The record gives the reactivity of an RNA of 177 nucleotides to 2A3. 2A3 adducts were read by reverse transcription with SuperScript II with manganese. Reactivities are given for positions 27 through 126. Conditions: 150 mM KOAc, 10 mM MgCl2 and 150 mM bicine (pH 8.5), 24 C.
[RMDB]
RNA sequence: GGGAACGACUCGAGUAGAGUCGAAAAGCUCGGAGACGAGCAAGGCUGACAAAACCCUGUCCCAACCUCCACGUGGUGUCGGCUGGAUAAUGCUGCAUUAUGUUGCAUUUAUCAACUGGGAAGUAAAGAGCCGCAUACUAUUCGUAGUAUGCGGCUCAAAAGAAACAACAACAACAAC
Reactivity to 2A3 in 0.01 (KOAc 150mM, MgCl2 10mM, bicine 150mM(pH8.5), 24C), signal-to-noise 1, nucleotides 027 to 126: g000c000u000c000g000g000a010g030a050c020g000a000g040c000a000a020g040g000c000u000g000a000c020a070a200a010a040c010c000c000u060g050u000c000c000c010a020a040c020c070u030c050c060a100c060g130u220g050g000u040g000u000c000g000g000c020u000g050g000a020u000a010a000u010g010c000u000g000c010a040u000u190a070u300g030u030u010g010c000a000u020u010u130a020u010c010a040a000c010u040g010g010g040a060a000g100u140a070a000a000